[RMDB]
RNA sequence: GGGAACGACUCGAGUAGAGUCGAAAAGCUCUGAGAGACAGAUCGAACAACAAAGAGAGAUCGAAAAUCUUAGGGGAGAGAACGAAUCUAUCGUCUUCUCUAGGACAUUGUCGAUCAGAUGUCCAAAGACCAUUCUAUGGUUCGCCAUAGAAUGGUCAAAAGAAACAACAACAACAAC
Reactivity to DMS in 0.01 (KOAc 150mM, MgCl2 10mM, bicine 150mM(pH8.5), 24C), signal-to-noise 3, nucleotides 027 to 126: g020c090u020c000u040g020a010g030a250g000a030c000a060g000a020u020c030g000a300a250c150a030a150c300a100a240a110g000a030g010a300g000a000u000c010g010a070a110a090a250u000c000u000u000a020g000g000g000g000a020g010a040g000a060a110c030g000a050a070u050c210u050a040u000c010g030u000c010u000u000c000u020c000u030a020g010g010a020c090a070u020u040g020u000c000g010a250u020c030a020g010a010u000g000u010c010c000a080a040a110
Reactivity to 2A3 in 0.01 (KOAc 150mM, MgCl2 10mM, bicine 150mM(pH8.5), 24C), signal-to-noise 5, nucleotides 027 to 126: g000c010u010c000u000g020a010g000a000g000a000c010a010g000a010u010c020g060a060a090c050a070a020c020a030a300a000g170a010g010a010g000a030u010c010g030a070a070a010a060u000c010u020u010a000g000g000g020g000a000g010a020g030a060a020c050g020a030a070u160c120u180a070u040c050g080u000c030u000u020c000u000c000u000a000g010g010a000c020a110u100u120g020u010c010g000a010u010c010a000g020a040u080g060u000c000c000a050a020a040
Structure probing data (DMS and 2A3) for a 177-nucleotide construct. The RNA was probed in 150 mM KOAc, 10 mM MgCl2 and 150 mM bicine (pH 8.5) at 24 C.